[RMDB]
RNA sequence: GGGAACGACUCGAGUAGAGUCGAAAAUCAGUCUUCUUGAGGAAGGGGAGUUGACACGUUGGGGCAAAGCUUUCUGUCAGCCUCAUCUCCUGGGUGCUUUAGGUCUGCUAAGAUGUUCCCAAGCUUCUUGUGGUGAGGACUCCUCAUUGAUCCAAGAAAUCGCUAUCGAUUUCGAUCGAUAGCGAUUAAAAGAAACAACAACAACAAC
Reactivity to DMS in 0.01 (KOAc 150mM, MgCl2 10mM, bicine 150mM(pH8.5), 24C), signal-to-noise 1, nucleotides 027 to 156: u000c060a120g010u030c010u000u030c020u000u030g020a120g040g020a110a070g030g000g000g040a120g020u010u010g020a240c070a010c070g000u010u000g000g000g020g000c030a030a070a140g000c030u000u000u000c050u010g000u000c040a280g060c000c030u000c020a030u020c010u000c080c050u000g000g020g000u010g000c030u000u000u000a090g040g030u000c030u010g010c090u000a050a080g020a180u000g000u000u010c010c010c000a030a300g010c020u000u010c030u000u010g020u020g000g000u020g010a120g000g000a130c070u020c020c010u000c060a090u000u010g010a200u000c020c010a060a130g020a150
Reactivity to 2A3 in 0.01 (KOAc 150mM, MgCl2 10mM, bicine 150mM(pH8.5), 24C), signal-to-noise 2, nucleotides 027 to 156: u090c020a000g020u040c040u080u010c000u040u120g060a050g030g030a030a050g000g020g040g000a020g000u050u090g080a060c020a040c150g040u030u000g030g000g010g040c050a120a090a020g030c050u000u130u040c080u040g110u120c020a000g000c010c000u000c000a040u040c030u020c000c040u030g020g010g070u130g000c010u090u030u110a060g000g040u030c030u010g050c000u010a050a060g020a240u070g030u100u100c000c000c000a000a000g020c040u100u030c000u040u240g030u040g000g040u030g010a050g040g030a070c020u010c000c010u020c020a030u000u150g030a010u020c050c000a020a000g010a010
This 207-nucleotide RNA was probed chemically with DMS and 2A3. The RNA was probed in 150 mM KOAc, 10 mM MgCl2 and 150 mM bicine (pH 8.5) at 24 C. The 2A3 profile rests on 960 reads. DMS adducts were read by reverse transcription with MarathonRT. For DMS, 1,761 sequencing reads were counted. The data come from the RNA Mapping Database (RMDB), library OK3TST. 2A3 adducts were read by reverse transcription with SuperScript II with manganese.